[RMDB]
RNA sequence: GGGAACGACUCGAGUAGAGUCGAAAACUUUGUGCUGGGAUUGGGAUGCUCUCUUUCGCGAUGCGGCAGCGCAACCCGUUCAACACGACUGCACUGGACAUCACCUGCGUGGAGAUCAACGCCGACUAUGUCGCUGUCGGGCGACAGAUUCUGCCGGACGAGUAAAUCCAUUCGUGGAUUUACUCGUAAAAGAAACAACAACAACAAC
Reactivity to 2A3 in 0.01 (KOAc 150mM, MgCl2 10mM, bicine 150mM(pH8.5), 24C), signal-to-noise 2, nucleotides 027 to 156: c070u130u100u140g030u040g040c030u000g000g100g040a110u100u130g110g000g040a060u090g020c000u030c000u000c000u070u180u090c060g020c050g080a060u120g020c000g090g000c020a000g000c000g020c000a040a040c030c070c030g040u070u090c050a040a060c050a020c140g070a050c050u040g020c030a020c040u010g030g040a030c020a040u070c010a020c040c030u050g030c050g080u120g040g040a070g000a030u070c050a000a060c050g010c020c000g030a030c050u070a050u150g020u040c030g000c020u040g100u150c030g080g070g010c000g000a000c020a010g040a030u070u050c020u040g020c000c010g040g020
Reactivity to DMS in 0.01 (KOAc 150mM, MgCl2 10mM, bicine 150mM(pH8.5), 24C), signal-to-noise 1, nucleotides 027 to 156: c020u010u020u020g060u000g020c040u000g040g010g000a100u000u000g020g000g010a100u000g000c050u010c060u000c050u010u000u000c060g030c040g010a110u010g010c060g020g010c050a080g020c130g030c050a060a050c030c020c020g010u000u000c040a060a080c080a060c030g010a110c040u010g020c040a140c030u010g010g030a110c050a120u010c030a090c030c040u030g030c030g000u000g000g020a140g000a100u000c040a080a100c000g020c030c000g000a050c040u000a170u000g010u000c000g010c020u000g000u000c090g020g020g030c000g040a040c020a020g010a220u010u000c070u020g050c020c000g020g030

The record gives the reactivity of an RNA of 207 nucleotides to 2A3 and DMS.
The RNA was probed in 150 mM KOAc, 10 mM MgCl2 and 150 mM bicine (pH 8.5) at 24 C.
Values cover nucleotides 27 to 156.
It was measured as part of the RMDB library OK3TST.